[RMDB]
RNA sequence: GGGAACGACUCGAGUAGAGUCGAAAAAUAUUGCUUGGGGGUCUCUUAACUUAACAAAAGGUGCACCAGAAUCGUGUUUUAAGGCAACCAAACUGAUAUCAGACAUCAUCAACGGAGUAGCCUUUCAGACUGAUUUGGUAUUCGUACCAAAUCAGUCAAAAGAAACAACAACAACAAC
Reactivity to DMS in 0.01 (KOAc 150mM, MgCl2 10mM, bicine 150mM(pH8.5), 24C), signal-to-noise 1, nucleotides 027 to 126: a090u000a040u000u010g000c040u000u000g010g060g010g000g000u000c040u020c040u000u000a050a150c150u000u000a030a100c110a100a030a120a100g000g000u020g000c050a000c030c070a080g000a120a040u040c100g020u000g010u010u000u000u000a040a060g050g010c030a060a080c040c040a070a070a080c140u020g010a010u000a040u020c080a180g000a120c080a030u000c050a000u000c030a010a160c120g010g010a050g000u000a110g000c010c020u020u020u010c180a120
An RNA of 177 nucleotides, treated with DMS and read out base by base.
The reactions ran in a buffer of 150 mM KOAc, 10 mM MgCl2 and 150 mM bicine (pH 8.5), at 24 C.
For DMS, 699 sequencing reads were counted.
For DMS the reverse transcriptase was MarathonRT.